Conditions: 150 mM KOAc, 10 mM MgCl2 and 150 mM bicine (pH 8.5), 24 C. This 207-nucleotide RNA was probed chemically with 2A3 and DMS.
RNA sequence: GGGAACGACUCGAGUAGAGUCGAAAAUAGGCGAACGAGAGGCCCUCUCCUGUGCGGAGUUGUCACGCUGACAAAAUUGUUAUGAUGUCCGAUUCCGGUAGCAUCGCGGCGAUGAUUUCAUAGGACAUCUUAUGAACCCAAGCGCUUCGGGGAAGCACAGGUACUCAUAGUUCGCUAUGAGUACCUGAAAAGAAACAACAACAACAAC
Reactivity to 2A3 in 0.01 (KOAc 150mM, MgCl2 10mM, bicine 150mM(pH8.5), 24C), signal-to-noise 3, nucleotides 027 to 156: u180a040g010g000c030g040a070a020c030g020a090g010a030g160g030c010c000c000u010c010u000c000c040u080g040u160g010c090g050g010a010g010u050u100g030u080c040a030c090g010c060u110g040a030c070a000a110a070a110u120u090g090u070u100a160u120g030a000u000g010u000c000c030g060a070u120u100c060c010g040g050u070a050g060c030a030u020c040g020c050g090g040c060g040a070u110g020a020u060u220u160c110a060u120a040g010g000a010c000a000u000c000u030u060a120u050g050a030a030c040c010c000a040a020g010c060g000c040u060u080c020g060g010g010g050a020a010g010c030a030
Reactivity to DMS in 0.01 (KOAc 150mM, MgCl2 10mM, bicine 150mM(pH8.5), 24C), signal-to-noise 2, nucleotides 027 to 156: u010a080g010g030c050g020a080a100c030g000a110g000a070g010g010c010c030c060u010c040u000c000c030u020g030u020g080c050g030g010a170g040u000u000g020u000c080a120c050g010c050u000g000a170c020a030a110a100a170u000u030g050u000u010a090u000g000a060u000g010u000c010c000g020a300u010u010c060c060g040g010u010a070g040c040a050u000c040g010c070g030g030c040g040a060u000g020a040u000u000u000c070a090u010a200g000g020a080c070a040u000c000u030u000a050u000g020a070a120c070c000c020a080a090g000c060g020c060u000u030c050g010g000g030g000a090a050g060c040a210
Annotation:
2A3 adducts were read by reverse transcription with SuperScript II with manganese.